[RMDB]
RNA sequence: GGGAACGACUCGAGUAGAGUCGAAAAGUAUUCAUAAAACACCUACUAUGCCUGGUGCCUUGGGAACAUAGAAUAAAUUGGGAAGUUACAGUCUAUUUUGAAUUUGGAAUAAAUGGAAAACACAGAGCAAAGUUCAAUGGAACAUGCAACAACAAAACAGUCCAUUAUGGUUCGCCAUAAUGGACUGAAAAGAAACAACAACAACAAC
Reactivity to 2A3 in 0.01 (KOAc 150mM, MgCl2 10mM, bicine 150mM(pH8.5), 24C), signal-to-noise 2, nucleotides 027 to 156: g020u020a070u100u120c060a060u150a160a120a010a000c040a020c010c010u020a040c030u070a050u180g030c020c010u060g020g010u020g000c000c000u010u060g010g010g040a050a050c040a070u100a070g040a070a030u100a100a050a050u070u040g030g020g020a090a020g020u010u070a020c010a020g030u030c050u020a040u030u110u020u040g050a070a040u070u050u100g010g060a030a000u060a090a130a090u030g030g000a000a090a000a000c090a000c020a020g050a000g060c040a060a000a010g000u040u030c050a100a080u120g050g000a010a000c040a020u140g000c010a010a030c010a010a010c050a000a230a220a000
Reactivity to DMS in 0.01 (KOAc 150mM, MgCl2 10mM, bicine 150mM(pH8.5), 24C), signal-to-noise 1, nucleotides 027 to 156: g010u020a040u000u020c010a080u010a100a100a090a130c050a090c000c010u000a070c010u000a130u000g000c030c040u030g000g010u000g020c020c050u020u050g040g000g020a090a060c020a080u000a090g000a140a090u020a030a120a140u010u000g010g010g020a090a110g010u010u000a040c010a080g000u010c000u010a060u020u000u000u020g010a080a120u020u000u000g000g000a040a110u000a010a050a060u000g000g010a110a010a080a080c020a010c090a120g000a080g050c040a080a020a070g020u000u000c020a040a060u020g020g000a020a010c050a110u000g020c010a030a050c040a050a150c060a090a050a110a170